[RMDB]
RNA sequence: GGGAACGACUCGAGUAGAGUCGAAAAGAUAUGGACACGUAGAGAUACUGCUCGAAGAACUCGGAAACGAGGGAGAGCUGUAUGUAGUGUCCUAAGUCAAACGUGGUCUUGUUCGCAAGACCACGAACGUUAGAUAUCGCUUCGGCGAUAUCUAACGAAAAGAAACAACAACAACAAC
Reactivity to 2A3 in 0.01 (KOAc 150mM, MgCl2 10mM, bicine 150mM(pH8.5), 24C), signal-to-noise 2, nucleotides 027 to 126: g030a020u080a010u120g000g000a000c030a020c060g180u290a080g020a000g010a300u010a010c010u040g020c000u000c020g120a190a050g010a030a030c020u000c000g030g000a070a030a050c020g010a000g030g000g030a030g000a000g010c030u000g050u010a020u020g130u070a110g000u000g010u000c000c000u020a040a030g030u040c040a070a060a020c020g000u000g000g010u000c000u000u040g030u080u120c170g000c100a010a010g000a000c000c000a000c000g000a010a010
Reactivity to DMS in 0.01 (KOAc 150mM, MgCl2 10mM, bicine 150mM(pH8.5), 24C), signal-to-noise 3, nucleotides 027 to 126: g020a050u000a300u000g000g020a020c000a000c000g010u010a210g040a140g000a030u000a010c000u010g000c000u000c000g000a080a140g000a120a180c010u000c020g010g020a150a130a180c000g000a000g000g010g030a070g000a010g010c000u010g000u000a000u000g000u000a060g000u000g010u000c000c000u000a010a040g010u000c060a050a090a170c020g020u000g000g000u000c000u000u000g000u020u000c160g020c000a010a000g010a010c000c000a000c020g020a010a040